[RMDB]
RNA sequence: GGGAACGACUCGAGUAGAGUCGAAAACCACACGAUCAUCCAGUACAUUUCACCACAUUGUCUGCAGCUCACCUCGCAGGAAUCACUUCGGUGAGCGAGGGCUGUUCGACUCCACGCGGAAAUGUCGCACUGUUAUGCACUUCGGUGCAUAACAGUGAAAAGAAACAACAACAACAAC
Reactivity to 2A3 in 0.01 (KOAc 150mM, MgCl2 10mM, bicine 150mM(pH8.5), 24C), signal-to-noise 2, nucleotides 027 to 126: c020c000a030c000a020c070g120a140u090c040a100u030c040c060a020g040u070a020c000a030u000u040u080c060a110c050c010a030c010a160u140u190g030u020c000u010g020c000a000g000c020u030c020a140c010c000u000c000g000c000a060g100g220a070a110u080c020a020c010u040u050c140g100g000u010g000a010g000c010g000a020g000g060g000c000u010g010u030u050c030g010a000c000u000c030c030a080c070g070c060g040g010a020a010a020u040g000u030c020g020
Reactivity to DMS in 0.01 (KOAc 150mM, MgCl2 10mM, bicine 150mM(pH8.5), 24C), signal-to-noise 1, nucleotides 027 to 126: c020c000a180c220a190c160g020a150u010c150a050u020c120c020a060g020u040a040c020a030u010u010u010c020a040c110c070a110c160a060u000u000g000u000c000u000g000c020a020g010c010u020c040a300c060c020u000c010g060c000a110g000g000a060a280u020c000a010c040u000u010c070g020g030u000g020a030g000c000g030a020g000g000g000c030u000g010u010u000c300g000a010c000u000c100c170a160c140g000c030g000g000a020a030a050u000g000u000c150g020
An RNA of 177 nucleotides, treated with 2A3 and DMS and read out base by base. For 2A3 the reverse transcriptase was SuperScript II with manganese. DMS adducts were read by reverse transcription with MarathonRT. The reactions ran in a buffer of 150 mM KOAc, 10 mM MgCl2 and 150 mM bicine (pH 8.5), at 24 C.